Overview:
Chemical mapping of a 207-nucleotide RNA with 2A3. Source: RMDB library OK3TST, as collected in RNAgym. Conditions: 150 mM KOAc, 10 mM MgCl2 and 150 mM bicine (pH 8.5), 24 C. The 2A3 profile rests on 513 reads.

[RMDB]
RNA sequence: GGGAACGACUCGAGUAGAGUCGAAAAGAUGGGUCCGAUGGAUUAAUGCGUCGCCCGCCAUUGGAUCCUGAUUGAUAGAUUGAAGGCGACGGUCGGAUCACUCGGUAAUUCGGUGCUCGACGAGUGAUCCGUGAUGAUAGUUAAGAUGAGCACCUAAGCCUACGGAUAUGUUCGCAUAUCCGUAGGCAAAAGAAACAACAACAACAAC
Reactivity to 2A3 in 0.01 (KOAc 150mM, MgCl2 10mM, bicine 150mM(pH8.5), 24C), signal-to-noise 1, nucleotides 027 to 156: g050a070u200g000g010g000u000c000c000g000a000u000g000g000a030u040u230a300a060u300g050c000g000u000c000g020c000c000c000g000c000c000a010u000u010g000g000a000u000c000c010u000g040a000u030u160g030a010u070a200g070a090u030u100g100a080a090g020g000c000g040a000c000g000g000u040c000g000g000a000u010c020a000c020u000c000g000g050u220a300a130u150u180c020g000g000u000g000c000u000c010g000a000c000g000a000g000u000g000a000u000c000c000g000u000g000a000u050g010a100u090a110g200u230u280a050a100g020a070u030g000a010g000c000a000c000c000u000a050a010